[RMDB]
RNA sequence: GGGAACGACUCGAGUAGAGUCGAAAAGAAAGAAAGAAAGGCACUGCCCCCGGUGAGUGAGGGUGCGGCAGCCCCUGGCUCGUGCCUGGCCGUGCCCUGACCCUCCGCACCCACCCGCAGGAGCUAAGAAUAGUCAUCUGUUCGCAGAUGACUAUUCAAAAGAAACAACAACAACAAC
Reactivity to DMS in 0.01 (KOAc 150mM, MgCl2 10mM, bicine 150mM(pH8.5), 24C), signal-to-noise 3, nucleotides 027 to 126: g000a150a060a060g000a110a050a090g000a070a080a080g010g030c010a050c030u020g010c010c010c040c030c080g020g020u000g000a060g010u010g010a030g000g000g020u000g020c040g000g020c100a070g010c030c030c050c040u010g010g000c010u020c160g000u020g000c040c010u020g000g000c000c010g000u020g000c000c000c000u010g000a050c020c010c000u020c030c020g000c080a060c040c010c020a060c010c010c060g000c040a050g020g000a040g000c020u000a060a160
Reactivity to 2A3 in 0.01 (KOAc 150mM, MgCl2 10mM, bicine 150mM(pH8.5), 24C), signal-to-noise 4, nucleotides 027 to 126: g110a020a040a020g120a050a080a010g080a090a120a030g030g000c010a010c030u030g010c010c000c000c040c010g000g030u050g010a050g020u070g090a020g010g000g000u070g010c010g010g000c040a060g050c000c000c010c030u040g030g000c030u050c160g130u190g020c010c000u010g010g000c000c020g000u030g000c000c000c000u010g020a020c010c000c000u030c000c010g010c010a030c000c020c000a030c000c020c000g010c010a010g000g050a060g010c010u050a070a010